[RMDB]
The data come from the RNA Mapping Database (RMDB), libraries RFM100 and RFMREP. The record gives the reactivity of an RNA of 177 nucleotides to DMS and 2A3.
RNA sequence: GGGAACGACUCGAGUAGAGUCGAAAAGCCUGGCUGGCCGGUCCGCCUAACCGCGUGUACUGGUCCGGCCGGGCCUUUCCUUCUGGGGAGCCGCAUGCCCUUCACUGGGUGUGUCGGGGAACCAGGACAAGCGUUCGUAAUUCGUUACGAACGCUUGAAAAGAAACAACAACAACAAC
Reactivity to DMS in 0.01 (KOAc 150mM, MgCl2 10mM, bicine 150mM(pH8.5), 24C), signal-to-noise 3, nucleotides 027 to 126: g000c000c000u000g010g010c010u000g020g020c040c010g000g000u000c010c000g000c000c020u010a070a170c300c300g000c050g000u010g040u090a000c010u000g000g000u080c010c000g020g000c000c010g000g000g000c000c000u000u000u030c000c000u000u050c000u000g010g010g010g010a300g010c000c000g020c010a000u000g000c000c000c000u000u000c300a150c150u030g000g030g000u010g000u000g000u060c060g010g000g000g000a300a280c020c000a000g000g000a140
Reactivity to 2A3 in 0.01 (KOAc 150mM, MgCl2 10mM, bicine 150mM(pH8.5), 24C), signal-to-noise 4, nucleotides 027 to 126: g000c000c000u010g000g010c010u000g010g000c000c000g020g000u000c000c010g000c010c010u050a060a040c030c020g020c010g010u090g040u150a000c000u010g030g040u110c020c040g000g000c000c010g000g010g000c010c000u010u020u000c000c000u030u020c010u000g010g010g000g000a020g050c000c000g000c000a000u010g000c000c010c000u070u100c180a230c300u070g000g000g000u020g010u010g080u130c040g010g000g000g000a010a000c000c000a010g000g000a020
For 2A3, 7,090 sequencing reads were counted.
2A3 adducts were read by reverse transcription with SuperScript II with manganese.
The RNA was probed in 150 mM KOAc, 10 mM MgCl2 and 150 mM bicine (pH 8.5) at 24 C.
DMS adducts were read by reverse transcription with MarathonRT.